[RMDB]
RNA sequence: GGGAACGACUCGAGUAGAGUCGAAAAUCAAAGCAACCCGCCGUCUAGGCGGAGGAAUCGUCCCUCGAGCUGCUCUCGCCGCUGCUUACGUUAUUGCAUGCGUGUGUCUUGGCGUGUACCUUCAGAGCAAAAGAGUCUGUUUCGACAGACUCUUUUGAAAAGAAACAACAACAACAAC
Reactivity to DMS in 0.01 (KOAc 150mM, MgCl2 10mM, bicine 150mM(pH8.5), 24C), signal-to-noise 6, nucleotides 027 to 126: u010c100a070a120a130g010c090a100a170c070c000c000g020c000c010g000u010c160u010a120g010g010c000g010g010a030g000g000a080a090u000c070g000u000c020c010c010u000c070g000a080g030c040u000g010c030u000c020u000c040g020c060c040g010c070u000g010c020u000u010a060c110g010u010u000a080u010u000g010c100a100u000g010c070g010u000g020u000g010u010c050u000u000g010g010c030g010u000g020u000a100c080c050u000u000c080a090g000a150g010
Reactivity to 2A3 in 0.01 (KOAc 150mM, MgCl2 10mM, bicine 150mM(pH8.5), 24C), signal-to-noise 3, nucleotides 027 to 126: u070c040a060a040a020g060c010a040a070c000c000c020g000c010c010g070u120c200u280a060g020g000c040g020g010a030g000g060a060a060u060c030g040u010c020c010c000u000c020g020a030g000c000u020g020c000u020c000u020c020g070c030c010g030c030u030g010c010u070u060a040c030g110u030u090a130u150u160g110c090a050u090g030c030g050u090g000u010g000u020c040u060u120g030g000c030g010u030g040u040a040c000c000u030u110c040a040g040a030g130

The data come from the RNA Mapping Database (RMDB), library OK2TST. Chemical mapping of a 177-nucleotide RNA with DMS and 2A3. 2A3 adducts were read by reverse transcription with SuperScript II with manganese. The reactions ran in a buffer of 150 mM KOAc, 10 mM MgCl2 and 150 mM bicine (pH 8.5), at 24 C.